[RMDB]
RNA sequence: GGGAACGACUCGAGUAGAGUCGAAAAUGUGAUGUGUUCGCACAUCACAAACUACCGAGAAUGUUCCUCGGUAUAAAAGAGGAACCCUUGGAAACAAGGGAAUAAGCCCCUGCUUCGGCAGGGGCAACCAGUUCAAGGAAUUCGUUCCUUGAACUGGAAAAGAAACAACAACAACAAC
Reactivity to 2A3 in 0.01 (KOAc 150mM, MgCl2 10mM, bicine 150mM(pH8.5), 24C), signal-to-noise 2, nucleotides 027 to 126: u040g000u000g000a010u000g010u010g000u060u050c200g040c100a000c000a010u000c000a000c000a000a040a010c010u010a000c000c010g010a010g010a120a280u130g020u060u050c000c000u000c020g020g060u140a130u120a210a140a050a020g130a050g090g020a050a060c000c000c010u010u010g000g020a000a060a010c000a010a000g030g020g040a000a030u050a040a030g000c010c010c000c000u000g000c010u030u030c110g050g000c000a010g000g060g010g000c000a000a000
Reactivity to DMS in 0.01 (KOAc 150mM, MgCl2 10mM, bicine 150mM(pH8.5), 24C), signal-to-noise 2, nucleotides 027 to 126: u000g000u000g010a000u000g020u000g000u000u010c210g070c010a020c000a000u000c000a010c000a000a070a090c090u010a030c010c000g010a040g000a150a130u010g000u000u010c030c000u000c050g010g050u020a020u020a070a060a120a130g000a050g000g030a140a050c000c010c000u010u000g000g020a200a120a130c000a010a000g000g000g010a040a110u000a120a070g000c000c000c000c000u000g030c000u020u010c260g020g000c010a010g000g020g010g040c000a010a000

Conditions: 150 mM KOAc, 10 mM MgCl2 and 150 mM bicine (pH 8.5), 24 C. The record gives the reactivity of an RNA of 177 nucleotides to 2A3 and DMS. For 2A3 the reverse transcriptase was SuperScript II with manganese.